[RMDB]
RNA sequence: GGGAACGACUCGAGUAGAGUCGAAAACGCCCUCCGACGCCGCUCGCCGCUCCUCAUGGAUGCCGCAGGCUCGUCACGGACGCACGCGUAACCCCCUCCUCGUUACGCCAAGCUGUUCGGACCACCAGGUUGAUAGGAGGUUCGCCUCCUAUCAACCAAAAGAAACAACAACAACAAC
Reactivity to 2A3 in 0.01 (KOAc 150mM, MgCl2 10mM, bicine 150mM(pH8.5), 24C), signal-to-noise 3, nucleotides 027 to 126: c040g020c010c010c000u020c010c020g040a030c020g010c030c000g010c020u040c000g010c020c010g030c020u000c010c010u120c040a080u160g060g000a040u120g030c000c000g050c030a040g030g030c010u030c030g010u030c020a080c060g030g010a010c000g000c010a030c010g010c000g010u030a040a030c020c010c000c010c020u060c000c000u050c010g020u020u010a020c040g000c020c050a110a040g000c030u070g020u040u010c000g000g030a020c020c010a020c010c020a030
Reactivity to DMS in 0.01 (KOAc 150mM, MgCl2 10mM, bicine 150mM(pH8.5), 24C), signal-to-noise 1, nucleotides 027 to 126: c240g000c070c080c010u120c020c060g000a040c080g000c020c000g010c030u030c080g000c020c040g000c000u000c020c000u000c140a140u030g000g000a040u000g010c000c040g030c010a140g030g000c030u000c070g000u000c040a050c050g000g000a090c020g000c020a110c130g000c030g000u120a000a000c000c030c050c050c030u000c050c060u010c130g000u020u010a000c100g020c020c080a120a080g030c040u090g020u040u000c060g020g000a030c030c080a020c060c040a070

Overview: Source: RMDB library RFM100, as collected in RNAgym. Chemical mapping of a 177-nucleotide RNA with 2A3 and DMS. DMS adducts were read by reverse transcription with MarathonRT.